[RMDB]
RNA sequence: GGGAACGACUCGAGUAGAGUCGAAAAUCUGGCCUUACCUUCGCAUCAAGAGGUACCAACAUGGAGGAUGAGGCGGACCAAUACUUUUCACAUGAUGAUCCAAGCAGUAGUGAUCAAUCCAGGUCCGCACGAUGGAAUGAUUCGUCAUUCCAUCGUGAAAAGAAACAACAACAACAAC
Reactivity to 2A3 in 0.01 (KOAc 150mM, MgCl2 10mM, bicine 150mM(pH8.5), 24C), signal-to-noise 9, nucleotides 027 to 126: u030c030u030g100g020c010c020u010u020a030c010c010u030u040c040g030c050a120u070c070a180a070g060a040g120g040u070a100c030c030a040a130c040a080u140g050g020a020g070g010a090u050g030a020g060g010c000g000g000a000c000c000a040a050u160a210c050u100u140u090u110c070a090c020a100u200g030a050u030g010a010u060c030c020a100a070g040c060a110g110u290a030g020u060g180a030u030c020a020a030u040c050c060a040g000g000u000c010c000g000
Reactivity to DMS in 0.01 (KOAc 150mM, MgCl2 10mM, bicine 150mM(pH8.5), 24C), signal-to-noise 6, nucleotides 027 to 126: u030c040u000g000g010c060c020u020u000a070c010c020u000u010c070g020c150a100u060c100a090a140g000a050g010g020u020a070c090c090a080a110c190a060u030g010g010a140g000g010a080u010g010a100g000g020c010g000g000a010c000c010a130a080u040a100c110u000u000u000u000c020a060c050a070u000g000a100u000g000a050u020c040c060a110a100g040c140a050g010u030a050g010u020g000a000u000c040a050a060u010c100c120a110g000g000u000c000c000g000
This 177-nucleotide RNA was probed chemically with 2A3 and DMS. DMS adducts were read by reverse transcription with MarathonRT. The RNA was probed in 150 mM KOAc, 10 mM MgCl2 and 150 mM bicine (pH 8.5) at 24 C. Reactivities are rounded to 0.1 and cut off at 0 and 3. For DMS, 11,376 sequencing reads were counted. Source: RMDB library OK1LIB, as collected in RNAgym. 2A3 adducts were read by reverse transcription with SuperScript II with manganese.